[RMDB]
RNA sequence: GGGAACGACUCGAGUAGAGUCGAAAAGGUCGUCAACGGCGCCCCUGGCUCCUCCGUAGCCGCGCUGCGCACCAGCGGGAGGUUAAGGUGCUCGCGAAUGUGGUUUAGCUCCCGCAGCCGGCGGGCCACUGCCCGCCGGGUUCGCCCGGCGGGCAGUAAAAGAAACAACAACAACAAC
Reactivity to 2A3 in 0.01 (KOAc 150mM, MgCl2 10mM, bicine 150mM(pH8.5), 24C), signal-to-noise 1, nucleotides 027 to 126: g030g000u040c000g050u030c010a080a060c070g000g000c000g040c060c010c010c010u000g000g000c020u000c050c050u070c020c060g220u120a010g050c030c000g140c010g000c030u030g020c030g030c000a170c060c100a030g000c030g040g010g080a060g020g000u220u020a040a050g050g080u080g080c060u140c210g070c060g290a300a180u190g080u070g060g290u010u010u290a000g000c010u000c000c050c000g050c000a020g000c000c000g100g040c000g000g040g000c040c010